[RMDB]
RNA sequence: GGGAACGACUCGAGUAGAGUCGAAAACAUGUAGCACAGUAGUGCUACAUGCAGAUAGAUCGUGAGAUCUAUCAGAAUAAGUAGAACAUAAGCCCGGUUCUACGUCAGCACGAAGACUAUGGUGACAUUGUCGACGUGCGGACAUAAAAGGGCGAAACCGUAUAAAAUGGUUCGCCAUUUUAUACGGAAAAGAAACAACAACAACAAC
Reactivity to DMS in 0.01 (KOAc 150mM, MgCl2 10mM, bicine 150mM(pH8.5), 24C), signal-to-noise 3, nucleotides 027 to 156: c000a000u010g000u000a010g000c010a000c000a300g000u000a130g050u000g000c000u000a000c000a010u000g020c030a130g010a030u000a020g020a010u000c010g010u000g000a220g010a020u000c000u010a000u010c010a120g010a140a080u000a070a140g010u000a010g000a020a040c010a000u000a110a300g000c000c000c000g030g010u000u000c010u060a000c010g010u000c000a000g030c020a020c020g010a050a300g000a030c010u000a030u000g010g010u020g000a300c010a060u000u000g000u010c000g000a300c010g020u010g000c030g020g030a010c010a110u010a040a030a080a020g030g190g030c000g010a060a150a160
Reactivity to 2A3 in 0.01 (KOAc 150mM, MgCl2 10mM, bicine 150mM(pH8.5), 24C), signal-to-noise 7, nucleotides 027 to 156: c000a000u010g000u000a010g010c010a010c050a120g300u300a030g010u120g000c000u010a000c000a000u000g000c000a000g000a010u000a000g000a010u000c000g050u060g050a040g000a020u000c000u000a010u000c000a010g040a020a080u300a110a010g010u000a000g000a000a000c020a040u100a120a030g010c010c000c000g010g000u000u000c000u000a000c000g000u000c000a000g000c010a000c000g000a020a000g000a010c020u060a020u020g010g040u120g030a030c010a010u010u040g000u000c000g020a000c000g000u000g000c010g000g000a000c000a000u160a030a080a020a020g000g000g000c010g000a060a010a000